[RMDB]
RNA sequence: GGGAACGACUCGAGUAGAGUCGAAAAAGAACUGAUAUACAGAGGGGACUCUGGGCUCAUUUUGGGGGGGCUCUGUCCCUCCCUGAUCUGGACACUUGCUGCUUACCAGUCAGGAAUGCUGUUUUAGGAGCUUCCUAUGUGUAUAUGUGUGCAUGUGCCUCUUAUACUGUUUCGACAGUAUAAGAGGAAAAGAAACAACAACAACAAC
Reactivity to 2A3 in 0.01 (KOAc 150mM, MgCl2 10mM, bicine 150mM(pH8.5), 24C), signal-to-noise 3, nucleotides 027 to 156: a010g090a070a050c030u070g030a050u040a010u030a100c020a000g070a060g080g010g000g020a030c010u020c050u040g040g020g010c020u030c040a060u080u140u180u150g000g000g000g000g020g010g020c010u040c100u280g130u180c020c000c000u000c010c010c000u010g000a020u030c040u020g030g020a010c010a010c040u050u140g040c030u030g000c010u040u030a050c030c000a050g040u070c060a000g030g080a020a020u100g000c020u020g130u170u160u110u170a100g070g010a010g030c010u040u050c010c010u030a100u080g110u010g000u010a020u020a040u220g070u010g050u060g030c040a060u070g050u050g060
Reactivity to DMS in 0.01 (KOAc 150mM, MgCl2 10mM, bicine 150mM(pH8.5), 24C), signal-to-noise 1, nucleotides 027 to 156: a150g000a110a150c050u020g010a120u000a050u000a020c020a040g000a080g000g020g030g000a100c100u020c040u000g010g020g000c030u000c050a060u010u010u010u000g020g010g000g030g090g080g000c020u000c200u030g020u020c010c000c000u000c020c000c010u000g000a000u000c040u000g020g010a110c050a120c090u000u000g010c060u000g010c020u000u010a130c000c000a110g010u000c040a130g000g030a080a080u000g010c080u000g000u000u000u000u010a250g030g010a140g040c040u000u000c000c030u000a030u020g030u010g040u030a050u010a070u010g010u000g030u000g010c020a060u000g000u010g020
Structure probing data (2A3 and DMS) for a 207-nucleotide construct. For DMS, 2,522 sequencing reads were counted. It was measured as part of the RMDB library OK3TST.